An RNA of 177 nucleotides, treated with DMS and 2A3 and read out base by base. Conditions: 150 mM KOAc, 10 mM MgCl2 and 150 mM bicine (pH 8.5), 24 C.

RNA sequence: GGGAACGACUCGAGUAGAGUCGAAAAGGCGGGCAGAAGGUGCUGGGUCUGCUCGGCAUCAGCGACCCCACGCUGGACGGCAUCGCUGCCGAGAACGAGCACCUGCUCGGCCAGACCUACCACACCACCAUAAAGGUAGGUUCGCCUACCUUUAUGGAAAAGAAACAACAACAACAAC
Reactivity to DMS in 0.01 (KOAc 150mM, MgCl2 10mM, bicine 150mM(pH8.5), 24C), signal-to-noise 7, nucleotides 027 to 126: g000g020c020g010g010g010c040a080g010a200a060g010g020u000g020c030u000g010g030g020u000c130u010g010c000u000c010g000g000c060a110u020c080a040g010c010g010a190c080c040c010c040a200c080g010c050u000g010g010a130c150g000g000c120a080u010c110g020c110u010g000c000c000g000a020g000a120a070c030g000a030g020c010a040c050c050u000g000c050u000c020g020g020c050c010a060g010a160c030c020u000a120c080c070a070c150a100c160c120a170
Reactivity to 2A3 in 0.01 (KOAc 150mM, MgCl2 10mM, bicine 150mM(pH8.5), 24C), signal-to-noise 7, nucleotides 027 to 126: g020g000c020g010g010g000c020a020g050a300a040g130g010u020g010c020u080g040g160g070u050c110u150g070c000u030c000g010g000c020a060u110c050a010g000c000g000a080c000c000c010c010a040c090g090c080u060g020g050a080c080g020g020c060a080u080c060g010c040u030g000c000c020g000a010g000a020a020c070g020a000g000c010a010c000c000u010g000c000u000c000g040g020c010c000a000g010a040c000c000u040a070c030c040a090c010a040c050c020a050

DMS adducts were read by reverse transcription with MarathonRT. For DMS, 9,976 sequencing reads were counted.